RNA sequence: GGGAACGACUCGAGUAGAGUCGAAAACAGGGUAGCCUCUUGUCUCAUCAUCUCCCUGCACUGUGUCCACGGGAGAACUUGGGAAGCCUUGGUGUGUGGGUAGAAGCCUCUUGAUUUCAGGAUGGAGCUCUACGGAUUCGUUCGCGAAUCCGUAGAGAAAAGAAACAACAACAACAAC
Reactivity to DMS in 0.01 (KOAc 150mM, MgCl2 10mM, bicine 150mM(pH8.5), 24C), signal-to-noise 1, nucleotides 027 to 126: c060a060g010g000g020u010a130g040c030c020u000c040u000u000g000u000c000u000c020a090u030c150a240u000c030u010c020c010c010u000g020c140a110c170u000g040u020g000u000c170c060a100c150g030g070g010a020g010a000a220c090u000u020g010g010g040a060a080g010c070c060u000u010g020g010u010g020u000g030u000g000g000g010u000a080g000a070a140g000c020c020u000c020u000u000g010a210u000u000u000c030a080g000g010a110u000g010g000a120g000